Record summary
This 207-nucleotide RNA was probed chemically with DMS and 2A3. The RNA was probed in 150 mM KOAc, 10 mM MgCl2 and 150 mM bicine (pH 8.5) at 24 C. 2A3 adducts were read by reverse transcription with SuperScript II with manganese. For DMS, 7,725 sequencing reads were counted.

RNA sequence: GGGAACGACUCGAGUAGAGUCGAAAACGGUUACGCCUUCUUUACCGUUAUCAAGGAAGGUACUCGGCCAUGCUAAGGGAAGCAUUAUUCCUUAGGCGCAUGACGCCGCCAGCAUGGUGUGAGGGGAAAAAGUAUGCUGGGUUCGCCCAGCAUACAAUCAUUAAGUGGACUUCGGUCCACUUAAUGAAAAAGAAACAACAACAACAAC
Reactivity to DMS in 0.01 (KOAc 150mM, MgCl2 10mM, bicine 150mM(pH8.5), 24C), signal-to-noise 3, nucleotides 027 to 156: c010g050g020u000u000a030c020g010c030c000u000u000c010u000u000u000a030c030c010g030u000u010a040u000c080a000a040g020g030a020a020g010g030u000a030c040u000c020g030g000c000c010a010u020g020c000u010a190a160g030g010g020a020a090g010c130a160u010u010a120u000u000c020c010u000u000a120g050g040c040g030c030a170u000g000a300c020g060c020c010g000c070c080a080g020c030a030u000g020g010u000g010u000g000a050g000g000g010g000a050a050a100a100a190g020u000a000u000g010c000u010g020g000g030u000u020c300g050c010c000c010a000g010c000a000u000a000c000a060a080
Reactivity to 2A3 in 0.01 (KOAc 150mM, MgCl2 10mM, bicine 150mM(pH8.5), 24C), signal-to-noise 6, nucleotides 027 to 156: c010g000g010u020u020a030c060g010c000c000u010u000c000u000u020u030a030c020c010g260u130u090a030u110c080a010a000g020g000a000a000g000g000u030a040c000u010c010g030g000c000c000a000u000g010c010u050a060a060g040g000g010a030a010g020c100a210u130u120a140u160u100c010c000u040u080a070g000g000c000g000c040a170u240g070a170c020g010c040c010g020c030c030a000g000c000a000u000g000g040u080g120u150g030a040g000g010g020g080a040a130a000a000a000g000u000a000u000g000c000u000g000g010g030u030u050c120g100c010c000c000a010g000c000a000u000a000c000a000a000